[RMDB]
RNA sequence: GGGAACGACUCGAGUAGAGUCGAAAAGGACACCUCCUGAAAAGCAAACUUCUUGUAUCAAUGUUGGAGUUUAAGCAUUAACAGGUGUUUGCCUCCACAUCUGCAUGGUGGUGAGCAACAGCAGGUACCUCUGUCCUUGACAUGCAAGGUUAGUUGACUAUCCACUAUGGUUCGCCAUAGUGGAUAGAAAAGAAACAACAACAACAAC
Reactivity to 2A3 in 0.01 (KOAc 150mM, MgCl2 10mM, bicine 150mM(pH8.5), 24C), signal-to-noise 2, nucleotides 027 to 156: g010g000a010c010a030c020c000u010c020c010u020g050a100a040a040a000g000c010a010a020a020c010u060u030c020u150u160g090u150a190u190c090a190a220u150g120u120u120g070g030a050g020u030u040u100a060a020g000c070a100u000u120a090a070c010a050g030g000u040g010u030u010u040g000c000c000u000c000c000a010c000a040u060c030u060g000c030a040u090g010g030u020g000g000u000g040a090g020c010a010a020c020a030g100c040a020g020g050u130a120c020c060u060c070u030g010u020c020c000u040u010g050a050c040a030u060g020c060a100a060g070g000u010u070a030g050u000u090g030a070
Reactivity to DMS in 0.01 (KOAc 150mM, MgCl2 10mM, bicine 150mM(pH8.5), 24C), signal-to-noise 2, nucleotides 027 to 156: g030g030a050c040a070c080c030u010c000c000u000g000a090a090a110a210g020c030a020a060a040c040u000u000c000u010u000g020u010a170u010c110a100a120u010g040u000u010g000g010a100g010u010u000u000a060a130g030c040a080u010u010a100a140c070a050g030g000u010g010u010u000u010g010c080c020u020c010c010a030c020a040u000c040u000g070c020a060u000g000g040u010g000g030u000g000a300g020c020a040a050c010a030g020c030a050g000g020u000a060c050c040u000c040u000g010u010c000c010u010u000g000a070c060a150u000g030c030a030a130g020g000u010u000a110g000u000u000g000a230